[RMDB]
RNA sequence: GGGAACGACUCGAGUAGAGUCGAAAAGACGGAAAAGAUCGAACCUAAGAAUAUCAGGAAUUGUGAGCCGAAUCCUAGGGCUCCUAGGUACGCAUCGUCCGAUGCGAAAUAAACACUAACGUCGAAAGCGAUCGAUGGAUUUCGAUCCAUCGAUCGCAAAAGAAACAACAACAACAAC
Reactivity to 2A3 in 0.01 (KOAc 150mM, MgCl2 10mM, bicine 150mM(pH8.5), 24C), signal-to-noise 1, nucleotides 027 to 126: g000a000c060g010g010a020a030a020a030g030a040u000c000g000a040a060c040c000u040a100a000g030a000a170u150a040u280c200a000g060g000a060a200u250u020g000u150g010a000g120c080c000g040a010a090u000c050c060u120a000g090g090g000c040u040c000c000u000a000g000g000u000a000c000g120c000a000u000c000g300u000c130c220g000a000u000g000c000g060a000a070a000u140a190a000a000c000a000c060u240a060a000c000g000u000c000g040a010a010a010